This 177-nucleotide RNA was probed chemically with DMS and 2A3.
RNA sequence: GGGAACGACUCGAGUAGAGUCGAAAAAUGCAUCAUGAACAAUAGAAGCUCUUAGUGGGCCAUUUUUGGUAAGCAGAACUGGCGAUGUGGGUUGAACCAAAUAUUGGGAUAAGACGUCUAAUAUUCAAUUGAUGUUCUUAUUCGUAAGAACAUCAAUAAAAGAAACAACAACAACAAC
Reactivity to DMS in 0.01 (KOAc 150mM, MgCl2 10mM, bicine 150mM(pH8.5), 24C), signal-to-noise 9, nucleotides 027 to 126: a060u020g000c050a050u000c040a060u000g010a100a070c070a090a100u010a080g000a140a090g000c040u000c030u000u010a090g020u010g010g010g010c010c030a040u000u000u010u010u010g000g010u010a060a090g010c040a050g000a050a050c060u000g010g010c040g000a060u010g020u000g000g010g010u000u000g010a070a110c060c050a040a040a050u010a050u010u010g010g010g000a070u010a060a090g010a060c130g000u000c030u010a040a050u010a070u010u010c130a070
Reactivity to 2A3 in 0.01 (KOAc 150mM, MgCl2 10mM, bicine 150mM(pH8.5), 24C), signal-to-noise 7, nucleotides 027 to 126: a000u090g020c010a030u030c020a030u140g080a090a030c050a080a040u080a140g120a150a030g030c010u000c000u050u080a070g050u170g040g020g050c000c020a060u040u030u020u050u050g040g000u070a080a020g050c010a010g020a080a030c010u030g060g010c030g070a090u070g020u050g070g040g020u040u090g020a030a020c010c000a000a040a030u160a050u050u070g020g000g010a030u050a060a070g050a040c050g010u000c020u030a040a050u050a100u130u090c050a080